This 207-nucleotide RNA was probed chemically with 2A3 and DMS. Reactivities are given for positions 27 through 156. For 2A3, 14,015 sequencing reads were counted. The RNA was probed in 150 mM KOAc, 10 mM MgCl2 and 150 mM bicine (pH 8.5) at 24 C. For DMS, 4,269 sequencing reads were counted.
[RMDB]
RNA sequence: GGGAACGACUCGAGUAGAGUCGAAAACGCAUGCGAGAGCAUGCGGCUAAGCUUCGGCUUAGUAAGAGCAACUUCGGAGUUUAGGCUCCCCGGCGUGUCUCGAACCAUGCCGGGCCAAACCCAUAGGGCUGGCGGUCCCUGUGCGGUCAAACUUCAAGCGACAUACCACGUUCGCGUGGUAUGUGGCAAAAGAAACAACAACAACAAC
Reactivity to 2A3 in 0.01 (KOAc 150mM, MgCl2 10mM, bicine 150mM(pH8.5), 24C), signal-to-noise 3, nucleotides 027 to 156: c000g000c000a000u000g000c010g010a030g010a000g050c000a000u000g000c010g000g000c000u000a000a000g000c000u030u130c280g090g000c000u000u010a000g000u020a050a010g000a000g000c020a050a140c050u080u070c120g020g010a010g010u010u020u040a060g030g030c000u020c000c000c000c000g000g000c000g030u010g020u020c070u060c300g070a040a020c040c000a010u010g000c000c000g000g010g000c010c010a030a010a000c010c000c000a000u020a010g020g000g000c030u060g110g070c110g060g050u150c000c000c000u000g010u010g020c150g000g000u030c030a020a000a000c000u010u010c020a050a030
Reactivity to DMS in 0.01 (KOAc 150mM, MgCl2 10mM, bicine 150mM(pH8.5), 24C), signal-to-noise 2, nucleotides 027 to 156: c000g000c000a000u000g030c000g020a300g000a300g020c000a000u010g010c000g020g000c000u020a020a030g020c000u000u000c300g090g000c030u000u000a000g010u000a070a120g010a100g000c020a080a070c030u000u000c030g030g020a020g020u000u000u000a140g010g000c020u020c060c000c000c010g030g040c000g060u000g000u000c080u000c180g000a180a140c170c020a020u000g030c040c000g010g020g000c040c050a030a040a060c030c010c000a070u010a030g010g020g020c060u010g020g010c060g000g010u000c000c020c000u010g030u010g000c100g070g010u000c060a040a020a070c020u000u010c010a170a210